[RMDB]
RNA sequence: GGGAACGACUCGAGUAGAGUCGAAAAUCUUUGUGCUACUUGCCCCUUUGCUAAGGGUGAUAGCUGUUCUUCUAAUUGCAAACAUUCAGUUGCUCAGUUGGUUAGUUACCUUUCUGAACGCUGUAAUACAUCGUGUCGUUCGCGACACGAAAAAGAAACAACAACAACAAC
Reactivity to DMS in 0.01 (KOAc 150mM, MgCl2 10mM, bicine 150mM(pH8.5), 24C), signal-to-noise 4, nucleotides 027 to 129: u040c040u010u000u000g060u060g040c000u020a070c190u030u000g030c060c010c010c010u000u000u000g000c110u040a190a180g000g000g090u000g000a050u000a020g000c050u040g050u050u000c000u040u060c080u040a060a070u040u030g020c090a010a100a090c170a140u060u000c080a020g020u010u030g090c100u020c010a030g030u060u000g020g010u010u110a110g030u040u070a110c010c020u030u050u000c000u020g000a030a050c020g050c000u060g000u010a020a030u000a000c080a050
Reactivity to 2A3 in 0.01 (KOAc 150mM, MgCl2 10mM, bicine 150mM(pH8.5), 24C), signal-to-noise 6, nucleotides 027 to 129: u030c020u040u140u220g150u210g000c000u000a060c080u000u020g030c010c000c000c000u020u030u040g010c020u060a000a030g010g000g000u030g010a020u000a000g000c050u040g090u110u050c060u120u030c030u110a140a120u220u160g030c080a070a030a080c040a090u040u080c030a020g010u090u230g240c000u000c000a030g020u020u020g020g030u030u040a050g060u060u170a070c000c000u050u140u070c010u000g000a000a010c010g020c010u000g020u090a000a060u070a080c070a070
An RNA of 170 nucleotides, treated with DMS and 2A3 and read out base by base. The data come from the RNA Mapping Database (RMDB), library 15KLIB. For 2A3 the reverse transcriptase was SuperScript II with manganese. For DMS, 15,736 sequencing reads were counted.